[RMDB]
Structure probing data (2A3 and DMS) for a 177-nucleotide construct.
RNA sequence: GGGAACGACUCGAGUAGAGUCGAAAAUCUUCCAGCCCCUGCGGCCAGUGCAAGGAGGCACCAAUGCUCUGAGGCUGUCGCGUGGUGCAGCGUCGAGCAUCCUCGCCGAGGUCCUUUCUGCUGCCUGCCGUAGUGUCGAAUUCGUUCGACACUACGGAAAAGAAACAACAACAACAAC
Reactivity to 2A3 in 0.01 (KOAc 150mM, MgCl2 10mM, bicine 150mM(pH8.5), 24C), signal-to-noise 7, nucleotides 027 to 126: u030c010u060u010c010c000a020g040c010c000c000c030u050g010c030g020g010c030c030a080g020u030g090c020a060a070g080g000a030g040g020c040a030c040c060a060a050u050g000c000u010c110u210g010a020g000g040c000u010g030u060c020g020c030g120u140g030g050u150g020c000a000g000c010g300u020c000g000a000g000c010a020u050c010c010u080c040g060c020c040g030a050g020g020u040c020c000u020u070u040c020u040g050c030u020g020c000c010u020g020
Reactivity to DMS in 0.01 (KOAc 150mM, MgCl2 10mM, bicine 150mM(pH8.5), 24C), signal-to-noise 2, nucleotides 027 to 126: u030c090u000u010c010c020a160g010c030c050c010c020u000g020c060g000g010c070c060a010g000u020g000c040a080a120g000g000a130g000g000c150a050c090c170a100a110u010g000c010u040c020u010g020a090g000g000c010u000g010u000c080g010c130g020u000g010g030u040g050c030a020g000c030g000u000c010g010a010g050c070a010u010c050c060u000c100g020c060c020g010a130g010g000u000c030c010u010u000u030c040u030g000c050u010g000c020c000u000g010
The data come from the RNA Mapping Database (RMDB), libraries RFM100 and RFMREP.